This 177-nucleotide RNA was probed chemically with DMS and 2A3. The DMS profile rests on 3,438 reads. For 2A3 the reverse transcriptase was SuperScript II with manganese. The RNA was probed in 150 mM KOAc, 10 mM MgCl2 and 150 mM bicine (pH 8.5) at 24 C. Values cover nucleotides 27 to 126.
RNA sequence: GGGAACGACUCGAGUAGAGUCGAAAACCACAGAUCUUCGGAUCUGUGGAAACAACAAAUACUGUCAGUUCAGACAGACACAAAUACAUUGAGUGUACAAUGAAAGCGAUUGCUUCGGCAAUCGCAACAAAUUUAAUCCGUUCGCGGAUUAAAUUUGAAAAGAAACAACAACAACAAC
Reactivity to DMS in 0.01 (KOAc 150mM, MgCl2 10mM, bicine 150mM(pH8.5), 24C), signal-to-noise 4, nucleotides 027 to 126: c010c000a020c000a010g010a000u010c000u010u020c220g030g000a000u000c000u000g040u000g000g000a030a040a050c070a080a060c110a060a090a110u000a150c010u000g010u000c020a130g010u010u010c250a100g010a020c000a010g010a130c150a040c080a050a060a070u010a150c130a060u000u000g020a210g000u000g010u030a090c120a060a020u010g020a120a090a090g010c000g000a000u000u000g010c000u000u010c180g010g010c000a000a000u000c000g020c000a030a050
Reactivity to 2A3 in 0.01 (KOAc 150mM, MgCl2 10mM, bicine 150mM(pH8.5), 24C), signal-to-noise 5, nucleotides 027 to 126: c000c000a000c000a000g000a000u000c000u040u190c250g160g000a010u000c010u000g000u010g000g020a050a040a000c020a010a010c020a010a140a070u180a210c010u010g010u030c010a100g040u170u230c010a050g020a010c000a000g060a030c030a010c010a050a170a010u300a050c050a040u070u110g050a070g140u090g030u090a070c050a070a080u110g100a230a060a010g020c000g000a000u000u000g000c000u030u050c150g080g000c000a000a000u000c010g000c000a000a000
It was measured as part of the RMDB library M2PK50.